[RMDB]
RNA sequence: GGGAACGACUCGAGUAGAGUCGAAAAAUCUUCGCGAAGUCAGCGCGGAAGGAGCGCGCAACUCCUUACCCUCGCCUUUUUUUUUCCGCUCCCGUUCGCGAAAGCGUUCAGCGGAAAAGGGACCAAAGUGUUAUCAUGGUUUCGACCAUGAUAACACAAAAGAAACAACAACAACAAC
Reactivity to DMS in 0.01 (KOAc 150mM, MgCl2 10mM, bicine 150mM(pH8.5), 24C), signal-to-noise 3, nucleotides 027 to 126: a100u010c090u000u000c060g010c070g010a110a080g020u000c160a110g000c040g010c300g000g000a040a020g000g000a010g000c040g010c220g010c200a110a080c020u000c000c000u000u000a180c090c020c020u010c060g010c000c010u000u000u000u000u000u010u010u000u000c020c010g000c000u010c220c150c100g020u010u000c020g020c010g010a110a040a110g000c020g020u000u000c030a040g020c010g010g000a010a000a010a010g000g000g010a100c100c100a040a050a100
Reactivity to 2A3 in 0.01 (KOAc 150mM, MgCl2 10mM, bicine 150mM(pH8.5), 24C), signal-to-noise 2, nucleotides 027 to 126: a000u030c030u060u070c020g000c030g030a060a030g110u130c030a010g060c010g030c020g060g000a030a020g020g000a020g000c060g000c030g020c060a050a140c010u010c020c000u030u060a160c010c000c010u040c040g070c030c010u130u110u020u030u010u000u000u000u010c010c000g030c020u040c040c070c030g010u020u000c020g010c010g030a060a020a000g000c000g010u000u010c000a000g000c030g000g000a000a000a000a000g030g020g000a040c060c100a060a120a060